[RMDB]
RNA sequence: GGGAACGACUCGAGUAGAGUCGAAAACGGCCACAUACCGAUGUUGAGGCCUUUCUUCCCAAGGGAAACUUACCAAAGGGAAAUAGCUAAUGAAAAGCAAUGACCUGGUCGACCAAAUCAUGGCGCACUACCUUUACGCAUUCGUGCGUAAAGGUAGAAAAGAAACAACAACAACAAC
Reactivity to DMS in 0.01 (KOAc 150mM, MgCl2 10mM, bicine 150mM(pH8.5), 24C), signal-to-noise 2, nucleotides 027 to 126: c220g020g020c010c020a120c080a080u000a200c050c120g000a140u000g010u000u000g010a080g000g000c000c000u000u000u020c190u000u000c000c010c000a160a100g000g000g030a110a080a080c120u010u000a100c030c070a050a120a170g000g010g000a050a180a110u000a090g020c040u000a100a080u010g000a020a070a050a060g010c000a120a060u000g030a160c010c050u000g030g000u000c030g000a210c050c020a050a100a110u010c040a080u000g030g000c100g040c130a140
Reactivity to 2A3 in 0.01 (KOAc 150mM, MgCl2 10mM, bicine 150mM(pH8.5), 24C), signal-to-noise 2, nucleotides 027 to 126: c020g010g040c010c010a030c020a100u100a070c040c140g280a130u180g020u080u040g090a020g020g020c000c000u000u040u010c060u030u000c040c000c000a040a010g060g060g010a170a090a050c050u070u130a080c070c040a080a140a120g000g010g040a050a050a070u140a040g000c000u090a080a100u270g110a220a120a000a020g000c020a000a060u040g030a050c000c050u030g000g000u030c020g010a150c030c020a050a030a100u160c080a100u120g010g010c040g010c040a020
Source: RMDB library OK2TST, as collected in RNAgym.
Chemical mapping of a 177-nucleotide RNA with DMS and 2A3.
Reactivities are rounded to 0.1 and cut off at 0 and 3.
For 2A3 the reverse transcriptase was SuperScript II with manganese.
The reactions ran in a buffer of 150 mM KOAc, 10 mM MgCl2 and 150 mM bicine (pH 8.5), at 24 C.
For DMS the reverse transcriptase was MarathonRT.